Structure probing data (2A3 and DMS) for a 177-nucleotide construct. The reactions ran in a buffer of 150 mM KOAc, 10 mM MgCl2 and 150 mM bicine (pH 8.5), at 24 C. Source: RMDB library OK2TRN, as collected in RNAgym.
[RMDB]
RNA sequence: GGGAACGACUCGAGUAGAGUCGAAAAGCUCUAAGAGCAGCUAUGAGAUGUCUCACCUUCCUUGGCUCGGGGUUUGGAGGACAGAUGUAGCAUGACUGUCAGGAAAGAGCAAACCUGAGUCCUGGUGCUCAUUUGACAAAUUCGUUUGUCAAAUGAGAAAAGAAACAACAACAACAAC
Reactivity to 2A3 in 0.01 (KOAc 150mM, MgCl2 10mM, bicine 150mM(pH8.5), 24C), signal-to-noise 8, nucleotides 027 to 126: g000c000u020c040u080a230a100g010a030g080c040a010g030c030u050a070u170g100a080g020a090u130g080u050c010u000c020a090c000c020u080u050c010c000u020u050g030g000c000u020c040g030g020g010g000u020u030u080g120g030a100g040g040a010c010a000g040a050u140g070u160a040g080c080a050u100g070a090c010u020g020u050c010a020g070g170a160a140a050g100a060g050c000a040a010a000c000c000u000g010a010g020u010c030c020u040g010g030u070g020
Reactivity to DMS in 0.01 (KOAc 150mM, MgCl2 10mM, bicine 150mM(pH8.5), 24C), signal-to-noise 7, nucleotides 027 to 126: g000c010u010c010u010a130a150g000a110g010c050a060g010c040u000a060u000g010a110g010a130u000g010u000c010u000c050a150c090c050u000u000c010c020u000u010g000g010c020u000c030g010g000g000g010u000u010u000g010g010a180g010g010a030c030a020g010a120u000g010u000a090g020c090a100u000g020a110c020u000g000u010c010a150g010g010a100a100a110g000a110g010c020a010a050a060c000c000u000g000a050g000u000c010c070u000g000g020u000g010